RNA sequence: GGGAACGACUCGAGUAGAGUCGAAAAGAUAGGGGGUUCGCCCCCUAUCAAAGGAGCAAUGUACUUUCUGCACCAAAGACGGAAAAACCGUCAAAGUACAAAAAACGAUGGCGUUCGCGCCAUCGAAUCUCAGUAUCUUGUUCGCAAGAUACUGAGAAAAAGAAACAACAACAACAAC
Reactivity to 2A3 in 0.01 (KOAc 150mM, MgCl2 10mM, bicine 150mM(pH8.5), 24C), signal-to-noise 1, nucleotides 027 to 126: g000a000u000a010g000g020g000g000g000u010u000c020g070c000c010c000c000c010u000a000u000c010a000a000a000g050g000a080g010c050a090a130u110g000u010a020c000u010u050u100c060u090g010c060a060c070c010a140a040a000g010a000c020g000g030a300a070a040a080a050c010c000g000u000c000a010a010a000g000u020a000c000a000a150a000a020a010a010c040g000a000u010g000g010c010g080u050u050c220g010c010g000c020c000a000u000c000g000a010a020
Reactivity to DMS in 0.01 (KOAc 150mM, MgCl2 10mM, bicine 150mM(pH8.5), 24C), signal-to-noise 2, nucleotides 027 to 126: g000a020u010a000g030g000g020g010g000u010u000c240g000c000c000c000c000c000u000a000u000c010a020a080a180g010g040a110g010c090a050a120u000g000u000a010c000u000u000u020c130u010g020c070a220c010c010a130a080a150g000a010c010g000g000a100a140a080a130a110c010c000g020u000c000a030a000a000g000u000a000c010a010a040a040a110a120a110c060g020a010u000g020g000c000g020u000u010c230g010c000g020c000c010a000u010c000g000a020a030
Structure probing data (2A3 and DMS) for a 177-nucleotide construct. The DMS profile rests on 1,289 reads. The 2A3 profile rests on 2,227 reads. Conditions: 150 mM KOAc, 10 mM MgCl2 and 150 mM bicine (pH 8.5), 24 C. For 2A3 the reverse transcriptase was SuperScript II with manganese.